Source information:
This 177-nucleotide RNA was probed chemically with 2A3 and DMS. The RNA was probed in 150 mM KOAc, 10 mM MgCl2 and 150 mM bicine (pH 8.5) at 24 C. DMS adducts were read by reverse transcription with MarathonRT. Values cover nucleotides 27 to 126.
RNA sequence: GGGAACGACUCGAGUAGAGUCGAAAAAUCCUUUGUAGACGACUUAACUACAGAACGGGGUGUUGUAAGCAUGAGAGUAGUCUUGUACUACGAUCUGCUGAGAUUUAGCCCUUGUUCUAUUGAUUUGAAAAUAAAUAUGCUUCGGCAUAUUUAUUUUAAAAGAAACAACAACAACAAC
Reactivity to 2A3 in 0.01 (KOAc 150mM, MgCl2 10mM, bicine 150mM(pH8.5), 24C), signal-to-noise 6, nucleotides 027 to 126: a000u040c020c000u050u070u150g070u030a070g010a090c100g040a030c100u120u150a150a050c020u070a000c030a050g000a010a000c000g010g020g000g000u070g030u160u140g040u080a010a010g000c010a050u300g000a010g000a000g010u000a000g000u000c010u080u280g090u150a010c010u000a000c000g010a020u000c000u000g000c000u010g010a040g010a020u070u100u140a020g000c000c000c000u030u290g010u000u000c000u010a070u010u120g060a060u070u030u190g050
Reactivity to DMS in 0.01 (KOAc 150mM, MgCl2 10mM, bicine 150mM(pH8.5), 24C), signal-to-noise 7, nucleotides 027 to 126: a090u000c010c010u000u020u010g010u020a030g010a090c130g010a100c110u020u010a100a110c070u000a090c100a020g010a010a010c010g000g000g010g030u000g000u000u020g000u010a150a010g010c000a010u050g010a010g000a300g010u000a000g000u000c020u050u020g020u040a010c000u000a000c000g000a150u000c000u000g000c000u000g000a130g010a080u020u030u030a180g010c000c000c000u000u040g020u000u000c010u000a060u010u010g000a150u000u000u010g000